[RMDB]
RNA sequence: GGGAACGACUCGAGUAGAGUCGAAAAGAAUGGUCCUUGAACUCCAGCCAUGACUGCCUAAGCGGUGCUCCUGGGGGCAGAGAAAUUUCUUAGACAAACAUGCCACAUUUAGGCUACUUUUGGCAGGAACGUAAAGGAGUUUCGACUCCUUUACGUUAAAAGAAACAACAACAACAAC
Reactivity to DMS in 0.01 (KOAc 150mM, MgCl2 10mM, bicine 150mM(pH8.5), 24C), signal-to-noise 8, nucleotides 027 to 126: g020a140a080u010g010g000u000c030c040u010u000g020a120a120c090u000c020c040a110g000c050c030a050u000g000a090c070u000g000c010c040u000a070a070g000c070g010g010u000g010c050u010c050c070u000g000g000g010g000g010c120a100g000a080g000a050a110a130u000u000u000c030u000u000a110g010a080c120a050a040a090c160a070u000g000c030c010a060c150a090u010u000u000a070g010g010c020u010a070c140u000u000u000u000g010g010c030a070g010g000
Reactivity to 2A3 in 0.01 (KOAc 150mM, MgCl2 10mM, bicine 150mM(pH8.5), 24C), signal-to-noise 4, nucleotides 027 to 126: g100a030a110u110g050g010u050c020c000u040u100g060a060a020c030u000c050c010a020g010c030c000a050u070g060a060c020u030g010c000c010u050a100a020g020c060g130g010u030g020c040u020c030c020u080g100g000g040g000g000c010a020g040a000g040a050a130a060u130u170u040c040u080u080a070g030a090c060a040a150a020c030a060u110g030c020c000a060c030a050u090u080u090a040g010g000c000u020a120c020u060u060u050u050g020g000c020a010g020g050
This 177-nucleotide RNA was probed chemically with DMS and 2A3. For DMS, 10,243 sequencing reads were counted. 2A3 is a SHAPE reagent: it acylates the 2'-hydroxyl of flexible nucleotides of all four kinds. It was measured as part of the RMDB library OK2TRN. The RNA was probed in 150 mM KOAc, 10 mM MgCl2 and 150 mM bicine (pH 8.5) at 24 C.